This 177-nucleotide RNA was probed chemically with DMS.
RNA sequence: GGGAACGACUCGAGUAGAGUCGAAAAAGACGAGGCCGAUCAGCAUCAGGCCGACGAACAAUGUAACGAACCACACACUGGACGGUCCGACCUUCACCUUGACCGGUGUGCGGCUCACCGAGGUGAAUCGGGCAUUUAAUUUCGAUUAAAUGCCCGAAAAAGAAACAACAACAACAAC
Reactivity to DMS in 0.01 (KOAc 150mM, MgCl2 10mM, bicine 150mM(pH8.5), 24C), signal-to-noise 3, nucleotides 027 to 126: a090g020a120c070g020a300g020g010c000c010g000a090u000c070a150g040c100a150u020c180a140g030g010c000c010g000a100c100g030a080a080c090a070a080u010g000u010a090a040c130g000a020a090c030c020a040c040a040c060a030c020u010g000g030a200c070g000g000u000c040c020g000a130c060c070u000u000c030a030c010c030u010u020g010a130c130c040g010g040u000g040u000g020c050g000g010c080u020c000a110c070c020g000a090g000g010u010g000a060a140